This 177-nucleotide RNA was probed chemically with DMS and 2A3. DMS adducts were read by reverse transcription with MarathonRT.
[RMDB]
RNA sequence: GGGAACGACUCGAGUAGAGUCGAAAAGCCUCGUCGUCGACGAAGGGGUGCAUUCCGAAGAGCUGGCCUGGCGUCGUCCGGCUCCCUCGACCGCACCGGAGCGCUAGAAAAGGUCCUCGGACUUUCUAGAUACUAAGGAGUUCGCUCCUUAGUAUCUAAAAGAAACAACAACAACAAC
Reactivity to DMS in 0.01 (KOAc 150mM, MgCl2 10mM, bicine 150mM(pH8.5), 24C), signal-to-noise 2, nucleotides 027 to 126: g010c000c010u000c020g020u010c030g010u000c200g000a050c030g000a040a080g020g000g010g020u000g020c130a140u000u000c050c020g000a090a030g040a040g020c040u010g000g020c300c000u000g020g000c020g000u000c120g020u000c000c010g000g000c070u000c030c020c060u010c060g010a110c070c040g000c070a080c020c020g000g000a100g010c030g000c000u000a030g000a040a230a120a030g010g010u000c020c030u000c130g010g000a120c140u000u000u000c070u000
Reactivity to 2A3 in 0.01 (KOAc 150mM, MgCl2 10mM, bicine 150mM(pH8.5), 24C), signal-to-noise 1, nucleotides 027 to 126: g000c010c000u030c030g060u000c000g020u050c100g100a210c000g000a110a050g010g010g000g000u070g070c020a140u090u000c030c020g020a020a000g010a010g040c040u050g010g030c000c000u010g010g000c000g000u090c020g190u000c000c000g000g010c010u060c020c010c010u130c060g100a150c070c020g040c010a020c020c000g010g000a010g010c000g040c000u020a000g040a030a110a010a010g020g060u010c010c020u000c010g020g000a020c020u050u070u020c050u000